[RMDB]
RNA sequence: GGGAACGACUCGAGUAGAGUCGAAAAGAAGAGAAAUCUUGUCAGGUCUACACGCAAGUGUUGAAUGAAAAUUUAAUCGUAUUUGUAAAUACGACACCUUGUGUGGAAGCUGUCCUUUAUGGACAGCCAGUUUAUUCAGGUUCGCCUGAAUAAACUGAAAAGAAACAACAACAACAAC
Reactivity to 2A3 in 0.01 (KOAc 150mM, MgCl2 10mM, bicine 150mM(pH8.5), 24C), signal-to-noise 7, nucleotides 027 to 126: g030a010a010g050a000g040a050a090a070u020c030u070u080g080u110c050a040g060g150u030c030u030a020c000a000c000g000c000a010a000g000u020g040u300u070g020a020a030u040g020a030a030a030a040u060u060u050a020a020u010c000g000u000a010u010u030u200g160u070a030a030a010u000a000c000g000a000c000a000c010c000u010u000g000u000g000u000g010g020a010a010g000c000u000g000u000c000c000u050u200u140a140u230g000g000a000c000a000g000c010
Reactivity to DMS in 0.01 (KOAc 150mM, MgCl2 10mM, bicine 150mM(pH8.5), 24C), signal-to-noise 7, nucleotides 027 to 126: g000a040a030g010a060g010a110a110a090u000c010u000u000g010u010c090a130g010g000u010c030u000a110c000a010c000g010c010a010a010g010u010g020u000u010g010a010a010u000g010a080a050a120a020u000u000u000a020a110u000c000g000u000a000u000u000u020g010u010a040a010a010u000a000c000g000a020c020a010c010c000u000u000g010u000g020u000g000g000a090a140g010c000u000g000u000c000c000u000u010u010a100u020g010g000a010c000a000g000c010
The record gives the reactivity of an RNA of 177 nucleotides to 2A3 and DMS.
High 2A3 reactivity points to a flexible backbone, as in loops and unpaired stretches.
Source: RMDB library RFMREP, as collected in RNAgym.
The DMS profile rests on 16,506 reads.